Background:
The record gives the reactivity of an RNA of 207 nucleotides to 2A3 and DMS. For 2A3 the reverse transcriptase was SuperScript II with manganese.

RNA sequence: GGGAACGACUCGAGUAGAGUCGAAAAGAUUAAGUGGGAGCGUCGCCCUGUCGGUGCAUCGGAUAUUAAUUAGCCAGUGCGUGGCAGUACGCAUAUUGAUGUCUACUUUGGCGUAGACUGUGCCAAUUUAAGGAUUGUUGGGCAAUCCAGCCCUAGAAAUUUACCAGGGUUUCGACCCUGGUAAAUUAAAAGAAACAACAACAACAAC
Reactivity to 2A3 in 0.01 (KOAc 150mM, MgCl2 10mM, bicine 150mM(pH8.5), 24C), signal-to-noise 1, nucleotides 027 to 156: g050a040u160u070a100a000g060u130g000g050g000a000g040c010g020u000c010g070c070c050c000u040g020u080c110g090g030u030g010c000a010u070c040g020g000a010u010a070u180u200a190a080u120u090a050g030c040c030a040g010u010g030c030g010u000g030g000c070a050g070u030a030c030g000c030a000u140a070u090u180g070a070u130g010u000c000u030a060c020u080u100u240g130g000c010g020u010a000g030a050c000u060g010u030g000c010c030a050a040u120u150u100a110a010g030g000a030u040u070g020u050u050g040g000g020c000a000a000u050c030c000a000g000c000c010c000u010a030g060a030
Reactivity to DMS in 0.01 (KOAc 150mM, MgCl2 10mM, bicine 150mM(pH8.5), 24C), signal-to-noise 2, nucleotides 027 to 156: g020a120u000u020a070a130g010u020g030g050g000a090g000c060g000u000c070g020c030c030c010u010g010u010c000g030g030u000g040c010a050u010c030g030g020a060u010a040u000u000a060a210u010u000a030g010c010c010a080g030u000g020c020g060u010g020g040c040a040g030u000a030c030g020c060a080u000a120u000u000g030a130u000g020u010c020u000a040c010u010u000u000g040g050c110g000u010a030g020a040c030u000g000u000g020c010c000a030a060u000u000u000a100a140g020g010a150u000u010g000u010u000g020g010g020c090a070a090u000c070c060a130g010c020c010c000u000a100g000a070